[RMDB]
RNA sequence: GGGAACGACUCGAGUAGAGUCGAAAAGUAUCACUUGUAUGUCUUCAAUCAGGUCUUAUCAAGUGAUGUUAUGUUUGAAGAUGCCCAAGGUUUGAAAAAGUUCUACAAAGAAGUUAGAGCUUACCUAAAAUCUUCCACUUCGGUGGAAGAAAAAGAAACAACAACAACAAC
Reactivity to 2A3 in 0.01 (KOAc 150mM, MgCl2 10mM, bicine 150mM(pH8.5), 24C), signal-to-noise 8, nucleotides 027 to 129: g030u040a010u020c010a000c020u010u010g000u050a060u130g020u020c010u100u160c090a160a300u170c050a110g070g110u030c040u110u120a130u230c000a020a030g000u020g050a000u010g020u040u070a080u040g130u020u030u060g050a100a020g040a070u130g010c000c000c000a010a010g070g000u030u150u300g070a030a020a010a010a000g000u010u010c010u000a020c030a050a240a020g230a150a020g110u070u040a000g000a010g010c000u000u010a000c000c000u000a040a030a000a080
Reactivity to DMS in 0.01 (KOAc 150mM, MgCl2 10mM, bicine 150mM(pH8.5), 24C), signal-to-noise 5, nucleotides 027 to 129: g000u030a040u010c020a020c020u000u000g020u010a060u050g000u000c000u020u000c160a110a140u000c240a000g050g000u050c020u030u040a110u020c050a030a010g000u030g020a020u030g000u030u040a110u040g020u010u010u050g030a090a040g050a110u050g050c040c000c000a130a020g010g010u000u050u070g020a020a020a050a070a020g020u000u000c010u040a020c060a040a090a190g070a150a040g020u070u000a020g000a020g030c010u020u000a040c040c020u030a000a050a080a090